[RMDB]
RNA sequence: GGGAACGACUCGAGUAGAGUCGAAAAGACCGACGUCAGCACGGUCAGGAUGUAGGUCCGCAUGCAUCCAAGUUGACGAGGAGAUCGAAAACGACUUCACGAUUUCCAAAGCGGACAAGAAGUCAAAGGGUACCUUCUAGUUCGCUAGAAGGUACCCAAAAGAAACAACAACAACAAC
Reactivity to 2A3 in 0.01 (KOAc 150mM, MgCl2 10mM, bicine 150mM(pH8.5), 24C), signal-to-noise 2, nucleotides 027 to 126: g000a000c020c000g030a050c000g050u220c060a010g120c120a020c110g020g100u030c020a000g000g000a000u000g000u020a000g070g000u020c000c000g030c000a000u010g010c000a000u000c010c000a020a060g180u070u060g110a050c050g010a060g050g000a010g030a110u090c040g000a030a030a040a240c080g040a040c010u020u010c040a030c140g000a050u040u020u040c020c000a010a070a010g000c000g000g010a000c000a000a070g110a040a000g030u060c000a020a040a070
Reactivity to DMS in 0.01 (KOAc 150mM, MgCl2 10mM, bicine 150mM(pH8.5), 24C), signal-to-noise 1, nucleotides 027 to 126: g000a210c030c000g000a100c120g110u060c100a060g140c150a070c140g060g000u000c120a120g000g010a010u000g030u020a000g000g020u000c010c000g000c000a090u000g000c000a000u000c000c000a000a290g000u060u060g010a170c070g000a160g010g000a200g030a000u000c000g000a130a050a000a130c000g000a020c000u000u000c060a210c160g060a100u000u070u020c070c070a000a240a040g000c000g020g000a000c150a120a050g000a080a000g080u000c050a100a050a100
Source: RMDB library OK1LIB, as collected in RNAgym. Structure probing data (2A3 and DMS) for a 177-nucleotide construct. Reactivities are given for positions 27 through 126. For DMS, 1,018 sequencing reads were counted. The 2A3 profile rests on 1,232 reads. The RNA was probed in 150 mM KOAc, 10 mM MgCl2 and 150 mM bicine (pH 8.5) at 24 C.